[RMDB]
RNA sequence: GGGAACGACUCGAGUAGAGUCGAAAAGAUAUGGAUGCUCACCUUGACAAUGAUGACAUGUCGGAAACGACAUGUUUGAGUCAAGGGUGAGGCAUCCUAAGUCAAAAGAUCGAGUUCGCUCGAUCAACUAUCGUACCGUCUUCGGACGGUACGAUAGAAAAGAAACAACAACAACAAC
Reactivity to 2A3 in 0.01 (KOAc 150mM, MgCl2 10mM, bicine 150mM(pH8.5), 24C), signal-to-noise 2, nucleotides 027 to 126: g050a000u090a030u130g010g000a000u000g020c010u000c040a040c000c000u020u000g000a000c020a150a300u170g020a010u120g000a090c000a020u000g000u000c000g010g070a090a090a040c020g000a000c000a000u000g000u000u000u000g000a000g000u010c020a020a040g070g000g020u020g010a050g030g090c000a010u020c000c000u000a070a020g040u030c030a000a020a040a210g020a020u010c010g010a020g020u080u150c300g080c170u000c020g020a020u000c010a000a020
Reactivity to DMS in 0.01 (KOAc 150mM, MgCl2 10mM, bicine 150mM(pH8.5), 24C), signal-to-noise 3, nucleotides 027 to 126: g010a030u000a300u010g000g010a010u000g010c000u000c030a030c000c000u000u000g020a000c000a160a230u010g000a080u010g000a000c010a010u000g020u000c010g020g000a100a050a230c000g020a020c000a010u000g020u000u010u000g000a180g030u000c000a000a000g030g020g010u000g020a050g020g010c000a000u020c000c000u000a010a090g000u010c050a080a080a190a180g000a030u000c010g000a000g020u000u020c300g000c010u000c000g000a000u000c000a070a150